Record summary: The record gives the reactivity of an RNA of 170 nucleotides to 2A3 and DMS. The reactions ran in a buffer of 150 mM KOAc, 10 mM MgCl2 and 150 mM bicine (pH 8.5), at 24 C. The DMS profile rests on 5,777 reads.
[RMDB]
RNA sequence: GGGAACGACUCGAGUAGAGUCGAAAACUCGGCAAGGGGCGGCAGUCCUCAGUACUCUUACUCUUUCCUAUAAAGAGGAGACUGCUGGACUCGCCGCCCGAGCCCGAGCAUGGGCCCCAGUUCCGAAUGACGGAGCCGUUCGCGGCUCCGAAAAGAAACAACAACAACAAC
Reactivity to 2A3 in 0.01 (KOAc 150mM, MgCl2 10mM, bicine 150mM(pH8.5), 24C), signal-to-noise 1, nucleotides 027 to 129: c000u000c000g010g050c030a080a130g000g030g030g060c000g000g000c000a000g000u000c000c010u000c000a010g000u090a290c010u010c000u030u180a240c000u030c060u030u130u000c000c000u120a060u120a300a010a000g000a000g010g010a020g000a000c000u010g000c050u000g000g000a010c000u040c040g000c000c010g030c000c000c000g000a000g000c000c000c000g000a000g000c030a130u070g000g030g000c000c000c000c000a050g040u010u000c000c000g090a110a070u180g050a050
Reactivity to DMS in 0.01 (KOAc 150mM, MgCl2 10mM, bicine 150mM(pH8.5), 24C), signal-to-noise 3, nucleotides 027 to 129: c020u000c040g030g000c000a220a070g140g000g000g010c080g030g060c040a000g000u000c090c000u020c000a000g010u000a070c030u090c070u010u110a300c000u000c050u020u030u030c190c290u160a180u060a080a000a000g030a020g000g000a070g050a090c080u030g020c180u020g000g000a040c000u080c170g020c000c050g000c000c000c000g030a000g000c200c030c060g000a070g020c140a110u110g030g000g010c000c000c000c000a240g000u000u000c030c000g050a200a150u000g000a260